Notes
An RNA of 177 nucleotides, treated with DMS and 2A3 and read out base by base. 2A3 adducts were read by reverse transcription with SuperScript II with manganese. The RNA was probed in 150 mM KOAc, 10 mM MgCl2 and 150 mM bicine (pH 8.5) at 24 C. It was measured as part of the RMDB library M2PK50.
[RMDB]
RNA sequence: GGGAACGACUCGAGUAGAGUCGAAAAACUGCCUGUUUCGACAGGCAGUAGUCUACUUCGCGCAACCGCGGAGUCGUUCCCGCGGUUGCGUGAAGUAGUUUGAUAUGAUCUUAUUCGUAAGAUCAAAUCCAUAAGCAUUAUUCGUAAUGCUUAUGGAAAAAGAAACAACAACAACAAC
Reactivity to DMS in 0.01 (KOAc 150mM, MgCl2 10mM, bicine 150mM(pH8.5), 24C), signal-to-noise 6, nucleotides 027 to 126: a020c000u000g010c000c000u000g000u000u000u010c150g010a070c000a000g000g010c000a000g010u000a020g010u000c000u000a010c000u000u000c000g010c000g010c000a010a010c010c010g010c000g010g000a160g010u000c120g000u000u000c040c000c000g030c010g000g000u000u000g000c000g030u000g000a000a010g010u000a000g000u000u010u010g010a150u010a130u010g000a010u000c000u000u000a020u000u010c170g010u000a010a010g000a010u000c000a030a090a120
Reactivity to 2A3 in 0.01 (KOAc 150mM, MgCl2 10mM, bicine 150mM(pH8.5), 24C), signal-to-noise 2, nucleotides 027 to 126: a010c000u010g000c010c010u020g020u020u080u070c190g090a010c000a000g000g000c000a000g000u000a000g000u010c000u000a000c010u000u000c010g000c000g000c010a000a000c000c010g000c020g030g010a050g010u010c020g030u030u030c000c000c000g010c010g030g000u000u000g000c000g000u010g000a000a000g000u000a000g000u000u030u040g010a010u010a090u120g000a000u010c000u020u020a030u060u090c230g060u040a010a000g000a010u000c010a020a060a000